An RNA of 170 nucleotides, treated with DMS and 2A3 and read out base by base. Reactivities are rounded to 0.1 and cut off at 0 and 3. DMS adducts were read by reverse transcription with MarathonRT. The 2A3 profile rests on 19,997 reads. It was measured as part of the RMDB library 15KLIB.

RNA sequence: GGGAACGACUCGAGUAGAGUCGAAAACUAGAGUUGAAGCUUCUACCGUUGUCUGUGGUGGAAAACGUACGUUUUAUAUCACAGCAAAUGGCGGUAUUUCAUUCUGUCGUAGGCAUAAUUGGAAUUGGACCCUCAAAGUUCGCUUUGAGGAAAAGAAACAACAACAACAAC
Reactivity to DMS in 0.01 (KOAc 150mM, MgCl2 10mM, bicine 150mM(pH8.5), 24C), signal-to-noise 5, nucleotides 027 to 129: c030u000a060g000a080g050u000u050g020a040a130g010c080u000u000c120u000a060c000c040g060u040u040g050u030c010u020g030u020g000g000u030g030g020a060a010a000a000c030g050u080a130c210g030u080u010u010u000a100u030a040u040c020a000c000a020g000c120a090a080a090u000g000g000c050g000g040u020a000u020u040u040c080a080u040u050c030u040g000u010c000g040u050a060g000g000c040a040u030a070a060u000u000g040g040a070a110u000u000g030g020a160c110
Reactivity to 2A3 in 0.01 (KOAc 150mM, MgCl2 10mM, bicine 150mM(pH8.5), 24C), signal-to-noise 8, nucleotides 027 to 129: c020u010a020g000a000g050u020u090g030a010a000g030c050u120u020c020u100a010c000c000g020u010u060g100u070c010u010g000u010g000g030u000g040g020a010a010a000a000c070g190u300a030c050g000u050u000u000u000a040u010a010u000c000a000c000a020g020c050a040a050a150u180g030g000c010g000g000u020a050u010u070u020c040a030u020u030c040u050g080u060c060g080u080a070g030g000c000a020u030a090a060u110u110g070g030a050a070u060u050g060g040a060c000